[RMDB]
RNA sequence: GGGAACGACUCGAGUAGAGUCGAAAAUGGUGCAUCAGGGGCUAAGCCGUAUUCGGGCCGGGAAAUGCCGACCAGGUAUUCGUGCAUUACUGGAGGUCGCCAAUCGCGAUGCGCGCCAAUUGGCAGCAACCCGCUAGAGGUUCGCCUCUAGCGGGUUAAAAGAAACAACAACAACAAC
Reactivity to DMS in 0.01 (KOAc 150mM, MgCl2 10mM, bicine 150mM(pH8.5), 24C), signal-to-noise 1, nucleotides 027 to 126: u000g000g050u020g000c000a040u010c080a080g010g030g000g000c140u020a090a190g000c000c020g020u020a100u020u010c050g000g000g010c050c000g010g000g000a110a130a040u010g000c030c000g000a030c100c040a080g010g030u000a060u020u000c040g080u020g020c070a050u000u000a200c040u000g030g020a100g020g020u000c140g010c020c030a020a050u000c070g000c080g030a030u010g020c080g020c020g010c050c050a080a140u000u000g000g000c030a140g000c180
This 177-nucleotide RNA was probed chemically with DMS. The reactions ran in a buffer of 150 mM KOAc, 10 mM MgCl2 and 150 mM bicine (pH 8.5), at 24 C.